[RMDB]
RNA sequence: GGGAACGACUCGAGUAGAGUCGAAAAGGGCGUGCACCUGGUGCCGAUCUCGAUCGGUGGCCGCGCACUGGGCGUCAUGCCGCUGUUGCCGGUCCUGUUGAUGGUGUGGGCCACCGCGCGCAGCACGCAGAUGCACUCCGUUCGCGGAGUGCAUCUGAAAAGAAACAACAACAACAAC
Reactivity to DMS in 0.01 (KOAc 150mM, MgCl2 10mM, bicine 150mM(pH8.5), 24C), signal-to-noise 2, nucleotides 027 to 126: g040g020g000c040g020u000g010c050a090c050c060u010g010g020u000g020c000c010g010a070u000c040u010c110g000a040u010c050g000g020u000g010g010c010c030g000c170g030c000a000c030u000g010g000g000c010g020u010c170a060u010g010c000c020g000c020u000g010u000u000g010c050c010g000g000u010c000c070u000g020u010u000g000a120u020g010g010u000g020u010g020g010g000c040c020a060c030c040g000c120g020c050g040c070a090g000c040a060c100g030
Reactivity to 2A3 in 0.01 (KOAc 150mM, MgCl2 10mM, bicine 150mM(pH8.5), 24C), signal-to-noise 1, nucleotides 027 to 126: g070g040g000c120g090u010g010c010a030c070c080u000g030g030u050g010c000c050g020a090u000c040u060c110g170a220u080c050g070g020u040g000g020c000c030g070c000g000c030a000c010u030g070g010g000c010g040u230c050a140u210g000c000c000g090c050u080g090u130u100g090c060c000g020g000u000c040c070u140g040u210u090g020a210u160g040g030u070g000u090g070g000g000c020c000a010c000c010g000c020g000c000g000c020a040g000c030a000c060g060
Background
This 177-nucleotide RNA was probed chemically with DMS and 2A3. The RNA was probed in 150 mM KOAc, 10 mM MgCl2 and 150 mM bicine (pH 8.5) at 24 C. For 2A3 the reverse transcriptase was SuperScript II with manganese. For DMS, 2,714 sequencing reads were counted. For 2A3, 1,312 sequencing reads were counted.